[RMDB]
RNA sequence: GGGAACGACUCGAGUAGAGUCGAAAAAGGUUUUCAGGUUCUCAGAUCGCAAGGAUUUAGUGUGAACCAAAAAGUCUGCAACCUGAAGUAUGAGAUUUGAAGGAAAGAGUUGAUCUUCUCCUAGAGUUCAAAUUGCUUUCAUUGACUCCGAAUGUUAUCAUCGUAAUAGUUUCGACUAUUACGAUGAAAAAGAAACAACAACAACAAC
Reactivity to 2A3 in 0.01 (KOAc 150mM, MgCl2 10mM, bicine 150mM(pH8.5), 24C), signal-to-noise 4, nucleotides 027 to 156: a000g100g000u070u040u030u030c030a020g000g010u020u010c030u010c030a000g000a020u050c100g030c210a120a090g070g020a100u080u080u080a120g030u050g030u060g040a020a020c000c000a060a020a000a010a000g040u030c040u050g020c050a050a040c010c010u040g020a010a010g020u100a070u180g060a060g010a070u070u090u100g050a040a030g010g030a030a020a020g020a010g020u040u140g060a120u070c030u060u020c040u010c050c020u040a060g020a010g090u040u050c020a010a030a050u060u050g050c020u040u070u100c040a060u020u120g060a050c030u000c060c050g080a090a090u120g020u260u200a050
Reactivity to DMS in 0.01 (KOAc 150mM, MgCl2 10mM, bicine 150mM(pH8.5), 24C), signal-to-noise 4, nucleotides 027 to 156: a080g010g020u000u000u000u010c040a080g030g000u000u000c050u010c020a140g010a040u000c020g040c100a230a250g010g010a070u000u010u000a120g030u000g040u010g010a040a070c020c010a020a040a140a100a080g000u000c020u000g020c300a060a060c030c010u000g010a050a050g010u000a060u000g010a190g000a130u010u000u000g000a090a090g010g010a070a070a050g000a090g010u000u000g000a130u000c050u010u000c040u000c030c030u010a170g000a150g020u000u000c020a030a080a130u000u010g000c040u000u000u010c070a100u010u000g000a050c030u000c040c090g000a060a120u000g030u000u000a170
The record gives the reactivity of an RNA of 207 nucleotides to 2A3 and DMS. High 2A3 reactivity points to a flexible backbone, as in loops and unpaired stretches. Values cover nucleotides 27 to 156. The reactions ran in a buffer of 150 mM KOAc, 10 mM MgCl2 and 150 mM bicine (pH 8.5), at 24 C. For 2A3, 2,538 sequencing reads were counted. 2A3 adducts were read by reverse transcription with SuperScript II with manganese.